[RMDB]
RNA sequence: GGGAACGACUCGAGUAGAGUCGAAAAGAUAUGGAUGCCUCCUGAACUACAGAGUCGGAAACGAUAGUCUGCAGGAAGGCAUCCUAAGUCAAACGAAUCAGCGUGACUUCGGUCACGCUGAUUCGAAGCUCAAGUAUUACUUCGGUAAUACUUGAGCAAAAGAAACAACAACAACAAC
Reactivity to DMS in 0.01 (KOAc 150mM, MgCl2 10mM, bicine 150mM(pH8.5), 24C), signal-to-noise 2, nucleotides 027 to 126: g040a040u000a300u000g000g000a010u000g000c000c010u000c000c000u000g000a110a020c110u020a300c010a020g040a030g000u000c010g010g000a120a070a150c000g020a010u000a130g010u000c000u000g000c000a010g010g000a030a020g000g000c000a000u000c010c000u000a000a140g000u000c040a120a120a270c080g000a040a030u000c000a000g050c000g060u000g000a050c000u000u010c200g010g000u000c000a000c000g030c000u000g000a000u000u000c010g010a030a050
Reactivity to 2A3 in 0.01 (KOAc 150mM, MgCl2 10mM, bicine 150mM(pH8.5), 24C), signal-to-noise 2, nucleotides 027 to 126: g020a020u050a040u190g010g010a010u000g020c000c010u000c020c010u030g010a050a040c020u150a090c240a040g040a000g010u020c010g010g010a160a050a020c000g000a000u060a100g300u100c010u020g000c000a000g000g050a110a180g000g010c000a010u000c000c000u000a000a000g010u000c060a060a080a090c020g030a010a010u000c000a020g030c000g030u020g010a010c000u180u110c300g010g000u000c010a000c000g000c000u040g000a000u000u000c020g000a010a000